[RMDB]
RNA sequence: GGGAACGACUCGAGUAGAGUCGAAAAUCGCUCAUUUAUCAAUAUUAUCAUCCUCACUACAUUGGUAAAUAAGCGAAUAAAGUAUCGUAUCAUUUAUGGCCACUAUUUAAACAAGUUACGGGCGCUCACGAAUCUAACUUUUCGAAGUUAGAUUCGUAAAAGAAACAACAACAACAAC
Reactivity to DMS in 0.01 (KOAc 150mM, MgCl2 10mM, bicine 150mM(pH8.5), 24C), signal-to-noise 5, nucleotides 027 to 126: u000c020g000c000u000c030a020u000u000u000a010u000c000a010a000u000a110u030u040a100u030c090a090u000c050c040u000c070a100c160u020a060c150a020u000u000g000g000u000a010a000a010u000a030a020g010c020g000a030a040u010a040a080a090g000u010a050u010c060g020u000a040u020c040a080u010u000u010a070u010g010g000c020c020a090c100u010a090u020u020u010a060a090a120c160a050a070g010u000u010a060c070g020g010g000c050g000c080u010c110
Reactivity to 2A3 in 0.01 (KOAc 150mM, MgCl2 10mM, bicine 150mM(pH8.5), 24C), signal-to-noise 9, nucleotides 027 to 126: u030c000g000c000u010c000a000u010u000u000a010u000c000a000a010u030a080u180u210a110u130c090a110u100c030c050u130c040a110c060u180a060c040a090u000u010g000g010u000a000a000a010u010a010a000g000c000g010a000a010u100a010a050a010g100u070a040u140c030g020u040a020u040c060a100u050u140u120a090u100g060g000c020c020a050c060u070a180u090u150u120a070a110a040c070a070a020g040u050u040a010c040g030g000g000c050g000c030u030c010
Conditions: 150 mM KOAc, 10 mM MgCl2 and 150 mM bicine (pH 8.5), 24 C. An RNA of 177 nucleotides, treated with DMS and 2A3 and read out base by base. DMS adducts were read by reverse transcription with MarathonRT. 2A3 adducts were read by reverse transcription with SuperScript II with manganese. It was measured as part of the RMDB libraries RFM100 and RFMREP.